[RMDB]
RNA sequence: GGGAACGACUCGAGUAGAGUCGAAAAUAUCUAGCUACUCUGGUGGGGCCUUAUAGAACCUUUGUGUCGACACUCUGUAUCUAGCUAAUCUGGUGGGGACGUGGAGAACCUUUGUGUCUAGCUCAGGGAUUGUAAACGCACCAAUCAGCGCCCUGUAGACGGGUAAAUUAUUCGUAAUUUACCCGUCAAAAGAAACAACAACAACAAC
Reactivity to 2A3 in 0.01 (KOAc 150mM, MgCl2 10mM, bicine 150mM(pH8.5), 24C), signal-to-noise 1, nucleotides 027 to 156: u150a040u080c040u040a010g030c010u040a050c000u030c020u150g020g000u030g050g000g020g010c030c060u250u110a150u000a080g090a120a080c010c000u070u050u070g080u050g040u080c040g080a060c010a000c080u050c020u050g090u080a060u060c040u030a000g060c020u100a120a050u110c070u060g010g010u010g000g030g000g060a010c020g000u000g010g000a040g030a030a050c010c000u030u140u090g010u030g020u000c030u020a010g030c000u000c010a020g030g010g000a070u010u110g020u070a020a080a060c020g030c010a040c030c060a010a200u100c060a000g020c000g050c090c000c000u000g040u010a000